[RMDB]
RNA sequence: GGGAACGACUCGAGUAGAGUCGAAAAUCCUAAGUCCAGUGGGAGGAUUCGAAGUCUGAUGACCAUGAUCGGAAACGAUCAUGCAAGGAUGUAUGAAUCCUUUGAUCACUGGAUAUGGAAAAACAUGGUAUGAACACUUCGGUGUUCAUACCAUGAAGAUCCAUAAAUGGUUCGCCAUUUAUGGAUCAAAAGAAACAACAACAACAAC
Reactivity to DMS in 0.01 (KOAc 150mM, MgCl2 10mM, bicine 150mM(pH8.5), 24C), signal-to-noise 4, nucleotides 027 to 156: u000c000c000u010a070a300g010u010c010c000a030g030u000g000g000g010a020g040g020a050u000u010c000g000a160a300g020u000c010u000g000a140u010g000a150c300c000a020u000g000a020u010c010g040g010a220a180a280c000g020a010u000c030a010u010g000c010a060a200g030g010a010u000g000u000a290u000g000a020a020u000c000c010u000u020u020g010a100u000c000a010c000u010g020g000a000u000a050u000g000g000a060a110a100a120a230c000a000u000g000g020u000a010u000g000a020a010c000a000c010u000u010c300g080g020u000g020u000u000c000a000u000a000c000c010a000u000g010a040a110
Reactivity to 2A3 in 0.01 (KOAc 150mM, MgCl2 10mM, bicine 150mM(pH8.5), 24C), signal-to-noise 6, nucleotides 027 to 156: u010c000c000u020a120a020g020u000c000c000a000g000u000g010g040g000a010g010g000a000u000u000c020g040a070a020g010u000c000u010g120a220u130g020a160c040c020a000u000g010a000u000c000g010g030a050a050a040c000g010a000u000c000a000u000g010c010a040a090g050g010a030u300g030u130a070u290g010a000a010u000c000c000u020u050u030g010a010u020c000a000c000u000g000g000a000u010a020u010g000g030a040a060a000a020a020c010a010u010g000g010u000a000u010g000a000a010c010a010c020u060u100c280g030g000u000g010u000u000c000a000u000a000c000c000a000u000g000a000a000